[RMDB]
Chemical mapping of a 170-nucleotide RNA with 2A3 and DMS. The reactions ran in a buffer of 150 mM KOAc, 10 mM MgCl2 and 150 mM bicine (pH 8.5), at 24 C. DMS adducts were read by reverse transcription with MarathonRT. For 2A3, 2,930 sequencing reads were counted.

RNA sequence: GGGAACGACUCGAGUAGAGUCGAAAAGUUUGGAGUCAUCCGGCCGAAGGGUUGAGAUGACCCACAGUCGGGUGAUCCACCAGGAGGGUGGAGGAGAGACCACCUCCAGAGGACCCCUUCAGCGAACAUACGGGUCGCUUCGGCGACCCGAAAAGAAACAACAACAACAAC
Reactivity to 2A3 in 0.01 (KOAc 150mM, MgCl2 10mM, bicine 150mM(pH8.5), 24C), signal-to-noise 2, nucleotides 027 to 129: g050u050u030u020g060g000a100g040u040c000a000u000c010c000g010g080c020c020g220a140a090g070g000g000u020u060g090a120g000a090u300g010a000c000c000c000a010c000a000g000u010c000g000g020g000u000g000a020u000c000c030a000c020c000a010g040g000a020g000g130g000u080g020g010a040g000g070a070g010a030g030a020c000c010a000c000c000u000c010c020a030g030a030g010g030a090c000c000c000c010u000u000c050a010g020c010g080a010a030c050a070u140a060
Reactivity to DMS in 0.01 (KOAc 150mM, MgCl2 10mM, bicine 150mM(pH8.5), 24C), signal-to-noise 3, nucleotides 027 to 129: g000u010u000u000g050g000a120g020u040c000a000u000c000c000g050g090c010c050g050a170a040g120g000g010u040u030g000a070g040a010u060g040a000c000c020c000a010c270a120g050u010c090g010g000g010u000g020a040u070c030c000a020c100c070a060g040g010a020g010g030g020u030g000g000a050g040g020a270g000a050g030a110c030c060a090c040c000u010c040c000a090g000a120g040g010a200c150c000c010c110u010u090c080a000g000c140g040a110a080c030a030u120a090